[RMDB]
RNA sequence: GGGAACGACUCGAGUAGAGUCGAAAAGAAAUGAUACAUGACCUUAAUCCAGAGGUUUAUAAACACUGAGCAAGCCUGUGGUGGUACAAGUACAAAGAAAACCAAACUUAGGCAUAUUAUGGUUAAAUGGCUGAAAUCUAAAGCAAAGAGCACAUUAAGGCACGUAUUUAUUCGUAAAUACGUGCCUAAAAGAAACAACAACAACAAC
Reactivity to 2A3 in 0.01 (KOAc 150mM, MgCl2 10mM, bicine 150mM(pH8.5), 24C), signal-to-noise 2, nucleotides 027 to 156: g070a020a050a010u190g050a010u050a190c060a090u100g050a050c000c020u070u050a060a010u030c010c010a030g000a010g070g000u030u050u040a060u070a040a150a000c050a030c120u130g020a050g130c050a040a030g040c000c020u180g010u060g100g060u030g010g000u000a000c000a000a010g010u010a040c050a040a140a000g030a000a000a010a000c000c000a000a010a030c020u000u000a030g010g000c030a000u020a030u040u040a030u060g050g000u030u110a080a000a000u020g000g000c000u000g010a030a030a000u170c150u200a130a020a000g040c000a040a000a000g020a010g020c010a000c010a020u040u110a060
Reactivity to DMS in 0.01 (KOAc 150mM, MgCl2 10mM, bicine 150mM(pH8.5), 24C), signal-to-noise 2, nucleotides 027 to 156: g010a170a080a090u000g000a120u000a070c080a080u010g000a090c020c010u000u010a090a160u000c040c060a100g000a070g020g010u000u000u000a050u000a100a050a090c090a120c030u000g000a140g030c060a090a080g020c010c020u000g000u020g030g020u000g010g000u000a040c020a000a080g020u030a150c110a070a150a120g000a000a010a030a050c000c010a030a050a080c200u000u000a010g010g020c020a070u000a020u000u000a030u000g000g000u000u000a010a040a030u000g000g010c000u010g010a000a040a070u010c110u000a070a040a080g010c000a030a040a070g000a020g010c000a050c010a040u000u000a130